[RMDB]
RNA sequence: GGGAACGACUCGAGUAGAGUCGAAAAGAUCUGCGCCGAUCCGAAACGCUAGCAAACAGCCCGCAUCAUGUCAUCUCCUAACUUCGACGUGGUGAAAUACUGAGCUUAUGCGAGUAAGCCUGUUAGCAAUAGAUCAGAACGUUCGCGUUCUGAUCAAGCCUCGAACAAGAUUCGUCUUGUUCGAGGCAAAAGAAACAACAACAACAAC
Reactivity to 2A3 in 0.01 (KOAc 150mM, MgCl2 10mM, bicine 150mM(pH8.5), 24C), signal-to-noise 1, nucleotides 027 to 156: g040a040u120c010u090g000c110g010c000c010g040a060u070c060c000g020a140a040a000c160g010c020u030a000g010c060a140a080a000c020a070g030c000c000c000g000c040a020u010c000a000u040g040u000c000a100u060c040u020c030c040u120a160a180c080u070u040c080g030a030c000g000u030g000g030u000g050a000a180a000u100a030c050u000g060a050g010c000u040u010a030u100g120c070g010a040g000u040a000a000g000c040c030u060g010u040u000a040g040c020a070a090u000a120g000a000u000c000a000g000a000a000c020g010u070u070c180g000c000g080u000u000c000u000g000a000u000c000a000a000